[RMDB]
RNA sequence: GGGAACGACUCGAGUAGAGUCGAAAACGACCACCUGACGGGUCGGACAUAGCGUCAGGAUCAUCCGUGCCAGUCACCACGGUAAUCAUGUGACUGAUGAUGGUUUUCCAUCUUAAUCUGACUGAGUCGUAGCAGUCUACAGUACUAUGACAUUAGACGAGUAAUCGUCGUUCGCGACGAUUACUCGAAAAGAAACAACAACAACAAC
Reactivity to 2A3 in 0.01 (KOAc 150mM, MgCl2 10mM, bicine 150mM(pH8.5), 24C), signal-to-noise 1, nucleotides 027 to 156: c020g000a000c000c000a000c000c000u000g000a000c000g010g000g010u000c040g120g010a060c200a090u270a030g050c000g000u000c000a020g010g010a000u060c020a020u000c000c000g020u010g000c000c000a000g000u000c000a000c040c000a020c010g020g090u080a020a020u060c100a000u080g000u000g000a000c030u000g000a040u140g000a000u000g040g140u090u280u300u180c000c000a020u000c000u040u130a150a120u130c100u050g000a000c000u000g000a000g000u000c000g010u020a000g000c000a040g020u050c090u150a120c080a020g050u070a070c000u000a000u000g000a000c000a020u010u080a110g070a050
An RNA of 207 nucleotides, treated with 2A3 and read out base by base.
The RNA was probed in 150 mM KOAc, 10 mM MgCl2 and 150 mM bicine (pH 8.5) at 24 C.